Structure probing data (DMS and 2A3) for a 177-nucleotide construct. The data come from the RNA Mapping Database (RMDB), library OK2TRN. DMS adducts were read by reverse transcription with MarathonRT.

RNA sequence: GGGAACGACUCGAGUAGAGUCGAAAAAUGAUUGCGCCGGCAGAUCUCGACGAGCUCGGGCGUGUAGUCGACCGCCGUGUAGUCGGCGCUGAUCGUCUUCAGCAGCGGCACCGUGCGCCCGCCGCCAACGCAUAGGCGUAUUCGUACGCCUAUGCGUAAAAGAAACAACAACAACAAC
Reactivity to DMS in 0.01 (KOAc 150mM, MgCl2 10mM, bicine 150mM(pH8.5), 24C), signal-to-noise 2, nucleotides 027 to 126: a110u000g010a050u000u000g000c030g020c000c000g030g000c030a130g010a080u020c050u000c000g010a030c010g000a140g020c150u000c050g040g010g020c050g000u010g030u010a120g020u000c040g030a040c020c010g000c020c000g050u020g020u000a080g030u010c010g010g000c000g010c030u010g030a030u000c090g000u000c070u010u000c090a090g030c060a110g010c050g040g000c000a100c100c110g020u010g000c070g010c080c010c020g000c050c000g000c020c140a080
Reactivity to 2A3 in 0.01 (KOAc 150mM, MgCl2 10mM, bicine 150mM(pH8.5), 24C), signal-to-noise 1, nucleotides 027 to 126: a020u060g000a000u050u070g010c010g000c010c020g020g000c020a030g030a240u080c010u010c070g060a020c010g000a000g030c040u030c040g000g070g000c030g020u160g090u040a080g060u020c020g030a030c000c020g070c000c000g070u050g000u050a060g020u030c020g000g010c000g000c000u020g020a030u030c060g120u000c020u120u140c040a140g000c040a000g020c020g020g000c050a030c110c070g090u110g030c020g000c000c000c000g000c020c000g050c000c020a040
2A3 adducts were read by reverse transcription with SuperScript II with manganese.